Chemical mapping of a 177-nucleotide RNA with DMS. In probing experiments dimethyl sulfate is read out at A N1 and C N3, which are open when not base-paired.
[RMDB]
RNA sequence: GGGAACGACUCGAGUAGAGUCGAAAAGAUAUGGAAGCUGAUGACCGUAAUCCCGAAGAACCACUUAACUGCUCUCGGAAACGAGAGCAGUUAAGUGGGGAGGGAGUACGCAAGGCUUCCUAAGUCAGAUACCUUAACCGUUCGCGGUUAAGGUAUCAAAAGAAACAACAACAACAAC
Reactivity to DMS in 0.01 (KOAc 150mM, MgCl2 10mM, bicine 150mM(pH8.5), 24C), signal-to-noise 1, nucleotides 027 to 126: g000a060u000a300u010g030g020a020a000g000c010u030g020a150u030g000a220c300c050g010u010a020a050u000c000c000c000g030a120a220g010a120a300c010c000a000c000u000u000a020a000c000u040g000c000u030c010u000c000g010g000a110a030a280c020g010a020g000a000g020c000a000g010u000u010a000a000g060u010g000g000g000g000a090g010g010g010a000g040u000a000c010g020c040a050a180g020g000c010u000u000c000c000u000a010a120g020u040c040a090